[RMDB]
RNA sequence: GGGAACGACUCGAGUAGAGUCGAAAAAAUUGGGAAAAAAGAAUAUUUGAUGCUGUUUGUUACACAUCUAAUGAAGUUCAAAUUGGUCAAAUUACACCGCCACCAAAAGGUUGGUUGAUUGUCGAUAGUGCAAUUUGUCAAUCACCAGAUAGCGGACUCGUAACACGUAGUUCGCUACGUGUUACGAAAAAGAAACAACAACAACAAC
Reactivity to 2A3 in 0.01 (KOAc 150mM, MgCl2 10mM, bicine 150mM(pH8.5), 24C), signal-to-noise 5, nucleotides 027 to 156: a020a020u190u070g000g000g040a110a100a020a010a020a010g130a120a110u110a060u110u060u020g020a030u070g160c080u020g030u040u060u030g030u150u140a030c030a010c010a060u090c080u140a050a130u170g100a100a040g030u050u060c010a010a030a060u040u050g030g010u020c010a010a010a100u060u070a020c030a020c040c000g000c020c010a040c010c010a060a090a010a030g000g000u030u010g000g010u030u070g010a010u000u030g020u040c070g130a130u080a140g150u190g060c020a040a060u020u020u060g030u000c000a010a020u010c000a010c030c000a000g020a060u100a030g010c010g050g000a050c030
Reactivity to DMS in 0.01 (KOAc 150mM, MgCl2 10mM, bicine 150mM(pH8.5), 24C), signal-to-noise 2, nucleotides 027 to 156: a060a080u000u000g030g030g030a030a090a070a140a030a130g020a110a110u000a050u000u000u000g010a050u010g020c030u000g020u000u010u000g010u010u000a140c060a100c030a080u000c050u010a060a090u020g000a060a120g020u010u000c050a040a060a100u000u020g010g000u000c080a030a040a060u000u000a090c050a060c000c020g010c020c010a040c030c020a030a070a060a080g010g010u000u010g030g030u000u000g000a010u010u000g020u000c030g010a120u000a100g050u000g000c030a020a020u000u010u000g000u000c020a020a040u000c000a050c040c030a150g010a040u000a030g010c010g000g000a170c110